RNA sequence: GGGAACGACUCGAGUAGAGUCGAAAAGAAUAUCGCAAAUCCUAUCGCACAAAUUCUUUCUGCGGCAAUGAUGCUACGUUAUAGUUUUGGUUUGGAAGAUGCCGCUAAAGCUAUCGAAAAUGCGGUGCACGCGCACUUGAUUCGUCAAGUGCGCGUGAAAAGAAACAACAACAACAAC
Reactivity to 2A3 in 0.01 (KOAc 150mM, MgCl2 10mM, bicine 150mM(pH8.5), 24C), signal-to-noise 1, nucleotides 027 to 126: g000a000a000u170a120u100c040g000c090a060a000a020u000c000c040u060a030u160c050g030c040a020c020a030a020a210u200u000c060u000u050u010c080u180g010c000g030g010c050a000a050u130g050a000u150g040c020u020a020c020g160u300u180a170u200a280g000u070u000u090u140g030g000u060u090u160g030g000a060a040g190a250u220g090c010c010g000c000u000a010a010a010g030c020u000a000u150c030g010a050a140a100a140u130g000c010g000g000u010g030
Structure probing data (2A3) for a 177-nucleotide construct. The RNA was probed in 150 mM KOAc, 10 mM MgCl2 and 150 mM bicine (pH 8.5) at 24 C. As a SHAPE reagent, 2A3 marks flexible, mostly unpaired nucleotides at the ribose 2'-OH.